[RMDB]
RNA sequence: GGGAACGACUCGAGUAGAGUCGAAAAGGAGUUGGGACGUAUUACUCUCUUGGUCAAAUCACUGAAUCCUACAACUUUGAUCCAAACAAUUUGUAUGAAAUUGGAGAGGAUCAAACACUGACUAUUGAAGACCCCAAAGAUUCGUCUUUGGGGUCUUAAAAGAAACAACAACAACAAC
Reactivity to 2A3 in 0.01 (KOAc 150mM, MgCl2 10mM, bicine 150mM(pH8.5), 24C), signal-to-noise 2, nucleotides 027 to 126: g080g010a040g050u120u000g010g000g000a000c030g020u030a060u010u110a100c030u000c000u040c100u110u080g030g000u010c000a030a030a030u110c000a000c140u120g080a000a040u080c000c000u040a190c100a080a050c040u080u000u000g000a000u000c010c000a040a050a050c000a020a000u000u010u010g250u070a220u300g300a000a000a010u040u000g060g010a230g020a000g050g000a000u000c000a000a020a020c050a010c040u050g150a080c000u220a190u150u110g020
Reactivity to DMS in 0.01 (KOAc 150mM, MgCl2 10mM, bicine 150mM(pH8.5), 24C), signal-to-noise 2, nucleotides 027 to 126: g000g010a050g010u010u000g000g010g010a060c040g000u010a060u010u020a140c070u010c000u000c060u000u000g000g000u000c020a020a120a120u040c110a080c110u040g010a020a070u000c010c020u000a110c140a040a180c160u010u000u020g000a000u000c010c000a020a260a120c020a020a020u000u020u000g000u120a260u080g030a010a020a000u020u000g010g010a150g030a300g000g000a010u050c000a000a000a000c190a090c050u020g010a150c010u040a070u010u000g000